Description:
The record gives the reactivity of an RNA of 177 nucleotides to 2A3 and DMS. Source: RMDB library OK2TST, as collected in RNAgym. For 2A3 the reverse transcriptase was SuperScript II with manganese. The RNA was probed in 150 mM KOAc, 10 mM MgCl2 and 150 mM bicine (pH 8.5) at 24 C. For DMS, 477 sequencing reads were counted. For 2A3, 816 sequencing reads were counted.

[RMDB]
RNA sequence: GGGAACGACUCGAGUAGAGUCGAAAACGGUCACGAAUCGGUGCGCCAGGCAAGGGAAUUGGUACGCAAUCACGUGGCCGAUCAGGCACAACAAUCGGCCACCGUCGACCGCUUCCUGGAUCAGCUCGGAAUUUUCCAUCUUCGGAUGGAAAAUUCCAAAAGAAACAACAACAACAAC
Reactivity to 2A3 in 0.01 (KOAc 150mM, MgCl2 10mM, bicine 150mM(pH8.5), 24C), signal-to-noise 1, nucleotides 027 to 126: c000g020g040u000c020a010c030g070a120a140u140c070g070g000u030g000c010g020c020c000a000g020g070c040a020a190g060g080g060a070a200u070u030g020g000u030a070c050g000c060a040a160u160c010a020c190g000u010g000g000c050c000g010a000u000c020a030g080g040c040a030c040a250a000c000a020a060u010c020g000g020c010c000a010c100c020g040u040c080g080a020c000c000g000c000u020u000c030c000u060g040g000a090u070c070a040g040c120u160c080
Reactivity to DMS in 0.01 (KOAc 150mM, MgCl2 10mM, bicine 150mM(pH8.5), 24C), signal-to-noise 1, nucleotides 027 to 126: c110g010g050u000c010a090c010g030a300a100u020c170g000g070u000g000c120g010c000c000a260g000g000c120a090a100g040g000g000a070a130u040u000g050g000u000a080c070g060c080a070a110u000c190a140c260g010u000g010g020c040c000g000a010u000c110a080g000g090c240a100c130a100a090c230a060a020u000c000g030g030c000c000a040c030c010g000u000c110g070a000c000c000g000c040u000u000c020c000u000g000g070a020u000c050a070g060c120u010c150